RNA sequence: GGGAACGACUCGAGUAGAGUCGAAAAGAAAUUUUAUCCCAAAACUCAAGUGAAAACGAUUUGCACUGAAUCUCUCCAGAAUAAUAAUUGCAGGAAAGUAUUGUAAGGUUGUUCAUAAGCAGUAUUCGUACUGCUAAAAGAAACAACAACAACAAC
Reactivity to DMS in 0.01 (KOAc 150mM, MgCl2 10mM, bicine 150mM(pH8.5), 24C), signal-to-noise 6, nucleotides 027 to 135: g010a070a080a140u010u010u020u010a140u020c000c010c000a080a050a080a120c170u010c100a080a060g000u010g000a070a070a090a110c150g020a100u010u010u020g000c040a040c050u010g010a070a070u010c060u000c050u010c050c040a090g020a080a060u020a070a070u020a050a060u020u010g010c040a050g010g010a060a050a080g010u030a070u000u000g000u010a100a110g010g000u000u000g010u010u000c040a060u010a130a060g010c020a010g000u000a020u000u030c170g020u000a020c000u000g050c020u000a040
Reactivity to 2A3 in 0.01 (KOAc 150mM, MgCl2 10mM, bicine 150mM(pH8.5), 24C), signal-to-noise 4, nucleotides 027 to 135: g020a000a100a010u160u160u120u090a100u110c000c000c000a020a050a030a050c100u130c120a120a040g060u050g120a050a090a050a030c060g060a090u040u030u180g030c020a020c040u040g030a100a090u010c040u020c000u000c070c020a030g140a140a030u150a160a020u100a100a110u160u160g030c040a030g010g090a060a050a010g120u120a090u160u160g030u060a070a070g120g000u000u000g000u030u000c020a020u030a210a000g020c000a000g020u000a010u000u090c160g020u020a000c010u000g010c020u040a070